[RMDB]
RNA sequence: GGGAACGACUCGAGUAGAGUCGAAAAUGCCUCUCCAGUGUCUUUAUCGACGAAUCGAGACACUCCAGAAUGGUCCACCACGCGCGUUACGCGAUUCACGCACUCCAUUGCAUCACUCACACCAUAAUAGGCGCUCAGAGCGGCUCUCACGGCCUUCCUAUACGCAGUGUUUCGACACUGCGUAUAGAAAAGAAACAACAACAACAAC
Reactivity to 2A3 in 0.01 (KOAc 150mM, MgCl2 10mM, bicine 150mM(pH8.5), 24C), signal-to-noise 5, nucleotides 027 to 156: u070g030c010c010u010c020u040c040c040a020g000u020g020u010c010u020u110u090a140u110c080g130a160c090g080a210a040u060c050g000a010g020a020c010a010c020u030c020c020a060g030a140a080u090g040g010u020c020c010a040c010c000a040c060g060c010g010c020g130u160u120a040c070g000c020g070a050u110u140c060a020c070g020c010a040c020u030c010c020a060u030u090g010c010a040u040c010a050c020u050c020a040c000a020c060c000a030u060a160a040u060a240g060g000c030g010c020u020c040a030g020a010g070c030g030g000c020u010c010u030c020a030c030g070g010c010c000u050u050c010
Reactivity to DMS in 0.01 (KOAc 150mM, MgCl2 10mM, bicine 150mM(pH8.5), 24C), signal-to-noise 2, nucleotides 027 to 156: u010g000c000c000u000c010u010c040c010a070g070u010g030u000c000u000u000u000a060u000c030g020a160c180g030a120a110u000c070g000a050g010a080c010a010c030u000c020c020a050g020a100a090u010g020g020u010c020c030a090c060c030a060c060g000c020g000c060g050u010u000a100c030g000c030g010a210u000u010c050a090c010g000c050a100c050u040c010c030a110u000u010g020c020a050u000c030a060c040u000c030a040c050a050c000c020a100u000a060a140u000a120g030g000c000g020c090u010c060a060g000a060g030c030g000g010c010u010c020u000c020a050c060g030g020c030c020u000u000c010